Source: RMDB library OK2TRN, as collected in RNAgym. This 177-nucleotide RNA was probed chemically with DMS and 2A3. For 2A3, 2,845 sequencing reads were counted. The reactions ran in a buffer of 150 mM KOAc, 10 mM MgCl2 and 150 mM bicine (pH 8.5), at 24 C. 2A3 adducts were read by reverse transcription with SuperScript II with manganese.
[RMDB]
RNA sequence: GGGAACGACUCGAGUAGAGUCGAAAACACGUGCUGAUCGUACUAGCAUGGGUACUGACACUACUAGUACACGAUCUGUGCGAUCUAGGACAUGCUCUAGACUCGUCUAGAGUACGCUAGCAUGUACGCGCUUAGAAGACUUCGGUCUUCUAAGCGCAAAAGAAACAACAACAACAAC
Reactivity to DMS in 0.01 (KOAc 150mM, MgCl2 10mM, bicine 150mM(pH8.5), 24C), signal-to-noise 2, nucleotides 027 to 126: c050a170c040g010u000g020c000u000g000a040u020c000g010u000a020c000u000a020g010c120a120u000g030g020g020u000a090c190u030g000a120c170a090c160u000a040c100u000a030g000u000a060c100a070c060g000a040u000c000u010g000u000g000c000g000a060u010c040u000a070g000g030a130c030a130u000g010c010u000c010u000a030g000a000c050u000c300g000u000c020u000a000g030a010g000u000a000c090g040c050u010a000g030c170a150u000g000u010a110c190
Reactivity to 2A3 in 0.01 (KOAc 150mM, MgCl2 10mM, bicine 150mM(pH8.5), 24C), signal-to-noise 2, nucleotides 027 to 126: c100a020c000g010u030g000c030u060g010a000u010c010g000u010a010c020u100a030g020c120a140u140g080g020g020u050a110c050u100g130a010c110a100c300u190a010c010u040a020g020u000a020c060a020c040g050a030u000c000u020g000u010g000c000g010a010u020c040u070a070g030g060a030c000a040u050g010c000u030c000u020a010g000a010c010u030c160g140u000c100u040a010g010a000g050u020a010c020g000c030u010a010g030c010a020u070g060u070a050c120